[RMDB]
RNA sequence: GGGAACGACUCGAGUAGAGUCGAAAAUUUGAAAUGGUCACGUUGGAAAUUUUCACGGGUUUUAUAUUUACGAUUGGUUUCAACAAACCCCAUCUGCUUAUAUUCCACGAGACGCUUUCCACAACGCUCGUCGUACAAGGUUCGCCUUGUACGACGAAAAAGAAACAACAACAACAAC
Reactivity to 2A3 in 0.01 (KOAc 150mM, MgCl2 10mM, bicine 150mM(pH8.5), 24C), signal-to-noise 2, nucleotides 027 to 126: u150u050u170g020a000a040a050u270g000g000u020c020a010c060g020u070u130g080g000a070a060a120u040u030u010u000c000a000c140g000g000g010u000u040u140u000a110u040a090u130u260u300a050c080g010a090u030u160g120g000u070u300u110c090a100a120c000a010a090a000c000c110c000c000a020u070c000u020g020c000u030u020a020u120a160u170u000c080c000a000c040g000a020g010a080c010g060c080u000u000u000c080c000a050c020a240a000c080g050c050